[RMDB]
RNA sequence: GGGAACGACUCGAGUAGAGUCGAAAAGCAACUACAGCCUCAAUCUCCAGCUGCAUGCCGUCUACAACGACAAUCUGAUGUACAUGCAACAGCAGCAGCAGCAGCAGCAACAGCAGCAUCACCUGCAGGAGAAAGUUUUGUUCGCAAAACUUUCUCCAAAAGAAACAACAACAACAAC
Reactivity to 2A3 in 0.01 (KOAc 150mM, MgCl2 10mM, bicine 150mM(pH8.5), 24C), signal-to-noise 1, nucleotides 027 to 126: g000c010a040a070c000u160a110c080a040g060c030c000u060c090a040a110u040c020u040c090c050a040g000c010u000g020c020a120u030g090c010c000g040u000c040u060a070c060a210a060c100g090a050c010a080a100u000c050u060g010a030u000g040u070a070c030a100u170g010c040a050a040c040a080g010c010a020g000c000a000g050c020a020g010c000a010g000c000a000g000c000a000a050c020a060g060c000a000g000c000a010u030c010a070c020c010u080g000c040a060
Reactivity to DMS in 0.01 (KOAc 150mM, MgCl2 10mM, bicine 150mM(pH8.5), 24C), signal-to-noise 1, nucleotides 027 to 126: g030c030a040a120c000u000a110c020a090g020c000c070u000c030a100a160u000c020u000c020c120a150g030c100u000g000c020a070u000g000c120c070g070u000c080u020a070c200a090a050c120g040a090c170a120a050u000c040u020g010a020u000g000u010a040c150a140u000g000c060a020a030c120a080g010c060a040g020c040a050g010c060a040g000c000a030g010c040a040g010c020a100a080c040a030g020c040a030g000c050a040u020c070a000c040c010u000g010c040a170
This 177-nucleotide RNA was probed chemically with 2A3 and DMS. For 2A3 the reverse transcriptase was SuperScript II with manganese. For 2A3, 990 sequencing reads were counted.